This 177-nucleotide RNA was probed chemically with DMS.

RNA sequence: GGGAACGACUCGAGUAGAGUCGAAAAGAUAUGGACGAAGCCGAUAAGCUCGGGUCGGAAACGACCCUGGAGCUUUUGACGGCUGAGUCCUAAGUCGGCGGAGAAAGGAGUUCGCUCCUUUCUCCAAGAAAAGUACACCGUUCGCGGUGUACUUUUCAAAAGAAACAACAACAACAAC
Reactivity to DMS in 0.01 (KOAc 150mM, MgCl2 10mM, bicine 150mM(pH8.5), 24C), signal-to-noise 1, nucleotides 027 to 126: g020a030u000a170u000g020g010a040c000g000a300a010g000c000c000g030a050u020a040a030g020c010u000c010g000g000g020u000c010g010g000a050a010a110c020g000a020c020c000c010u000g000g010a000g010c010u000u000u000u030g020a290c020g000g000c000u000g000a280g000u000c000c000u000a000a020g010u000c000g000g010c170g010g000a040g000a010a000a010g000g030a020g020u000u040c230g010c010u000c000c000u000u000u000c000u000c000c000a030a030
DMS adducts were read by reverse transcription with MarathonRT. For DMS, 1,267 sequencing reads were counted. Source: RMDB library TTRDEL, as collected in RNAgym.